This 207-nucleotide RNA was probed chemically with 2A3 and DMS. The reactions ran in a buffer of 150 mM KOAc, 10 mM MgCl2 and 150 mM bicine (pH 8.5), at 24 C. Reactivities are given for positions 27 through 156. Source: RMDB library OK3TST, as collected in RNAgym. The 2A3 profile rests on 1,673 reads. For DMS the reverse transcriptase was MarathonRT.
[RMDB]
RNA sequence: GGGAACGACUCGAGUAGAGUCGAAAAGGUCAGGGUACGUCGCGCGGAACGCCACUGGCUGCAUCACCUGACGAACAUGGAUACCGGACUCGGCGACUUCGCCCGGAGGCGGCAUGUACUGGUACCGCGUCACCAGUUCAACAAAUUGCGCCAGCGGCAAAAAGCUGAAGUUCGCUUCAGCUUUUUGAAAAGAAACAACAACAACAAC
Reactivity to 2A3 in 0.01 (KOAc 150mM, MgCl2 10mM, bicine 150mM(pH8.5), 24C), signal-to-noise 3, nucleotides 027 to 156: g070g020u040c010a000g030g000g080u130a100c080g010u030c010g000c010g010c020g070g010a090a040c050g020c030c030a060c000u000g030g000c070u130g000c020a050u110c030a030c010c010u010g020a020c030g030a020a020c010a000u060g020g050a110u110a230c020c000g050g100a150c020u030c040g000g070c000g120a160c100u250u160c140g020c010c060c050g080g000a040g030g040c000g010g000c000a020u060g020u020a050c000u010g030g000u030a130c020c000g000c010g010u000c010a000c020c000a010g000u060u120c010a060a100c000a020a070a070u130u060g000c000g000c000c010a010g010c000g000g000
Reactivity to DMS in 0.01 (KOAc 150mM, MgCl2 10mM, bicine 150mM(pH8.5), 24C), signal-to-noise 3, nucleotides 027 to 156: g010g030u010c020a000g020g000g050u010a070c090g050u000c050g010c030g010c080g020g030a120a200c090g040c000c020a020c020u040g020g020c000u000g020c020a090u000c090a070c020c010u000g000a060c030g000a040a110c030a130u000g000g000a140u000a030c020c000g000g010a140c020u000c070g010g000c000g040a090c120u000u000c040g060c020c040c070g010g020a100g020g020c020g030g050c030a050u010g020u010a120c010u010g020g020u000a030c010c020g000c020g030u010c140a080c000c010a050g010u000u000c060a070a140c070a040a100a130u000u000g020c000g050c000c010a040g010c010g010g030